[RMDB]
RNA sequence: GGGAACGACUCGAGUAGAGUCGAAAAGAGGCAUUAACAAGAGACUAGUAGGUUAGCUGCGUUGUGUUAGCCUUGCUGGCUGGCGCGACAUCGCGGCGAAUUUUAAAUAAGUCAGCUAUAGGUGUAGAGCUGCAUGUAGCAGGGGUGAUGGACAGGACUAGACUCUGUUCUUCGGAACAGAGUCUAGAAAAGAAACAACAACAACAAC
Reactivity to 2A3 in 0.01 (KOAc 150mM, MgCl2 10mM, bicine 150mM(pH8.5), 24C), signal-to-noise 2, nucleotides 027 to 156: g040a000g030g050c010a040u000u080a070a030c060a150a000g060a010g000a060c040u050a030g070u010a070g050g100u200u090a050g000c020u000g030c030g030u000u000g000u010g030u020u100a010g000c000c000u010u220g060c040u010g020g010c000u000g040g000c010g000c050g020a030c010a000u060c040g000c020g000g000c010g010a050a050u070u210u050u060a110a160a040u100a010a040g000u020c000a000g020c040u080a030u030a160g040g000u060g000u060a030g040a040g060c020u020g030c040a030u100g020u130a030g060c000a000g040g010g000g000u010g020a020u000g000g030a020c020a090g030g000a000